[RMDB]
RNA sequence: GGGAACGACUCGAGUAGAGUCGAAAAAGCAGCGGAUUUCCUCACAUGACGUGAUUGAUGUGGGGUCGGUGACCACCGAAUUCAACACGUUGUUCGAGACGAUCACCUCGAUCGCCGAGAAGGUGGACAUUCUUACUGGCUUCGGCCAGUAAGAAUGAAAAGAAACAACAACAACAAC
Reactivity to DMS in 0.01 (KOAc 150mM, MgCl2 10mM, bicine 150mM(pH8.5), 24C), signal-to-noise 3, nucleotides 027 to 126: a100g010c030a060g000c070g000g000a100u010u020u000c020c030u000c070a080c140a090u040g000a000c050g010u000g000a160u010u000g000a010u000g020u030g000g030g000g030u000c000g020g010u050g000a050c020c010a140c010c060g000a080a080u020u000c030a000a020c020a000c030g000u000u020g000u000u000c070g000a170g000a030c020g000a020u010c010a120c130c120u040c100g000a030u000c040g010c030c020g010a210g010a080a070g020g010u020g010g010a200
Reactivity to 2A3 in 0.01 (KOAc 150mM, MgCl2 10mM, bicine 150mM(pH8.5), 24C), signal-to-noise 8, nucleotides 027 to 126: a000g070c100a010g020c020g040g020a060u050u050u050c000c010u030c020a070c020a040u140g020a010c000g030u030g080a300u030u030g010a020u020g040u120g000g000g000g000u010c050g190g150u280g050a040c010c030a210c090c040g060a140a080u030u020c000a010a010c000a000c020g000u000u000g020u020u020c030g020a020g020a140c060g010a020u030c030a080c080c060u070c060g040a050u030c020g000c020c000g030a050g020a110a030g060g020u060g000g020a010